Conditions: 150 mM KOAc, 10 mM MgCl2 and 150 mM bicine (pH 8.5), 24 C. This 207-nucleotide RNA was probed chemically with 2A3. 2A3 is a SHAPE reagent: it acylates the 2'-hydroxyl of flexible nucleotides of all four kinds.
[RMDB]
RNA sequence: GGGAACGACUCGAGUAGAGUCGAAAACAGUUCUGGUGGUGCUCUGAAUGGAGUGCUCUACUGAGAUUAUAAAAUAGAAGGUAAGCUAUUAUCUCUUACAACAGGGCAGGGCUUGUGGGAAUAGGCGUAAAGGCGAGCAGCUUCGGCUGCUCGCCAACUACAUGGAUAAGUUCGCUUAUCCAUGUAGAAAAGAAACAACAACAACAAC
Reactivity to 2A3 in 0.01 (KOAc 150mM, MgCl2 10mM, bicine 150mM(pH8.5), 24C), signal-to-noise 1, nucleotides 027 to 156: c030a000g010u040u070c020u070g060g000u070g030g030u000g010c000u010c000u130g140a100a130u290g000g000a010g020u020g020c020u000c000u020a070c020u030g010a020g030a030u070u100a100u140a150a140a040a000u110a010g050a050a000g100g060u100a000a070g000c010u010a040u020u070a040u050c050u020c040u050u120a040c000a190a050c030a090g020g060g000c010a000g050g010g000c040u060u040g020u090g000g000g010a020a150u200a070g070g050c040g030u070a030a020a020g030g000c000g000a030g040c000a020g000c000u060u080c150g030g000c080u000g020c000u000c160g000c000c000a000a000